[RMDB]
RNA sequence: GGGAACGACUCGAGUAGAGUCGAAAAUGCAGCCGUGUCAAAUUCAGUACCUGUCCUAUGCAUGGUAGGCACUGGCCCAGAAGGCUGCCACAGAAACACUGUGACUCAUGGGCCCUGUUCCUGUGUCGCUUGAUCUGAACUUCGGUUCAGAUCAAGCAAAAGAAACAACAACAACAAC
Reactivity to 2A3 in 0.01 (KOAc 150mM, MgCl2 10mM, bicine 150mM(pH8.5), 24C), signal-to-noise 1, nucleotides 027 to 126: u030g010c020a010g000c010c030g110u070g030u090c030a000a050a120u210u030c000a020g020u020a020c000c030u050g130u180c020c040u140a130u270g150c030a020u100g020g000u010a010g000g000c000a020c040u010g000g010c000c000c000a010g010a000a010g030g000c000u020g000c010c000a010c010a000g140a060a280a000c100a020c080u000g000u000g040a040c000u030c090a070u050g010g020g000c070c040c010u030g000u000u010c000c010u010g060u120g110u130c060
Reactivity to DMS in 0.01 (KOAc 150mM, MgCl2 10mM, bicine 150mM(pH8.5), 24C), signal-to-noise 1, nucleotides 027 to 126: u010g010c000a040g000c000c010g010u000g060u010c080a060a050a140u030u000c050a030g030u000a020c010c010u010g000u010c030c020u000a120u030g000c260a120u010g000g020u000a000g020g010c000a010c000u010g040g000c050c000c010a090g000a190a120g000g000c030u000g000c000c100a000c010a030g030a170a070a060c280a050c180u010g030u000g000a150c110u000c150a210u010g040g000g010c030c010c070u000g010u000u000c000c000u030g040u000g030u000c240